[RMDB]
Structure probing data (DMS and 2A3) for a 207-nucleotide construct. 2A3 adducts were read by reverse transcription with SuperScript II with manganese. The RNA was probed in 150 mM KOAc, 10 mM MgCl2 and 150 mM bicine (pH 8.5) at 24 C. Values cover nucleotides 27 to 156.
RNA sequence: GGGAACGACUCGAGUAGAGUCGAAAAUGAAGUUGACUAUUCUGUGUAUCAAGCCCUUCAACCGACUCCUGGUAAAAUAAUGUCGCCCCAGCAGUGCCAGCGAUAGUCAGACACAGUAUGAGAACUAAUCCAAUAUUAAUUGACCGGCCAAUUAUACCGUAUCCUAUUAAUUCGUUAAUAGGAUACGAAAAGAAACAACAACAACAAC
Reactivity to DMS in 0.01 (KOAc 150mM, MgCl2 10mM, bicine 150mM(pH8.5), 24C), signal-to-noise 2, nucleotides 027 to 156: u000g020a030a110g040u000u000g030a110c060u000a120u010u000c030u000g030u000g000u010a130u020c070a070a080g020c020c040c010u000u000c040a060a210c090c040g000a040c010u010c010c020u000g000g040u000a030a080a050a160u010a030a090u010g020u000c040g030c020c000c020c030a080g040c040a070g030u000g010c040c040a130g020c050g010a070u000a040g000u000c040a080g010a070c030a030c020a050g040u000a100u010g010a110g000a070a090c040u020a050a060u010c040c060a030a090u000a080u000u000a080a080u010u010g020a070c050c040g020g000c000c030a010a050u010u000a080u000a130c090
Reactivity to 2A3 in 0.01 (KOAc 150mM, MgCl2 10mM, bicine 150mM(pH8.5), 24C), signal-to-noise 3, nucleotides 027 to 156: u100g020a030a060g050u070u060g050a060c030u030a080u090u030c050u050g070u010g010u040a090u180c060a110a060g000c030c000c000u050u040c070a080a060c040c020g040a020c030u010c010c020u040g040g030u090a070a100a110a130u220a040a100u090g010u070c020g060c020c000c000c000a010g000c000a010g010u010g090c010c010a010g010c020g040a040u050a050g020u060c020a000g020a020c020a000c000a040g090u080a070u120g070a070g030a050a030c040u050a070a020u010c050c000a050a070u080a090u200u100a090a050u070u020g030a040c030c020g010g040c020c010a020a030u130u100a050u150a110c100
Source: RMDB library OK3TST, as collected in RNAgym.